[RMDB]
RNA sequence: GGGAACGACUCGAGUAGAGUCGAAAAUCGUGACAAUUCGUUGUCACGAAACAUUAUGUGGUGAAAUAUAAAAGCCGAAAUGCCGAUACCAUAUAAUUUAAAGAAUGGAUAGUUUCGACUAUCCAAAGUGUACCACUCAAUUCGUUGAGUGGUACACAAAAGAAACAACAACAACAAC
Reactivity to DMS in 0.01 (KOAc 150mM, MgCl2 10mM, bicine 150mM(pH8.5), 24C), signal-to-noise 1, nucleotides 027 to 126: u020c010g000u000g000a010c000a000a010u010u010c180g070u000u000g000u000c000a000c010g000a020a070a060c120a050u000u000a000u000g010u000g010g030u000g010a080a060a060u000a080u010a140a080a200a140g000c050c030g010a060a090a050u000g020c030c040g000a160u000a010c000c000a020u000a020u010a000a000u030u020u000a060a170a100g000a070a150u000g000g030a010u000a000g000u000u000u020c220g010a000c000u000a000u030c000c000a000a020a040
Reactivity to 2A3 in 0.01 (KOAc 150mM, MgCl2 10mM, bicine 150mM(pH8.5), 24C), signal-to-noise 1, nucleotides 027 to 126: u000c000g000u010g000a000c010a020a010u020u110c250g050u140u030g000u010c000a010c000g000a000a000a000c010a010u040u000a010u020g010u010g000g030u040g080a080a170a010u190a030u090a150a130a000a010g020c000c000g070a070a070a010u120g000c010c030g030a080u010a030c000c000a000u000a000u000a040a050u000u050u120a090a090a030g080a110a100u080g010g010a000u000a010g000u070u030u060c210g050a020c000u010a000u000c000c000a030a000a000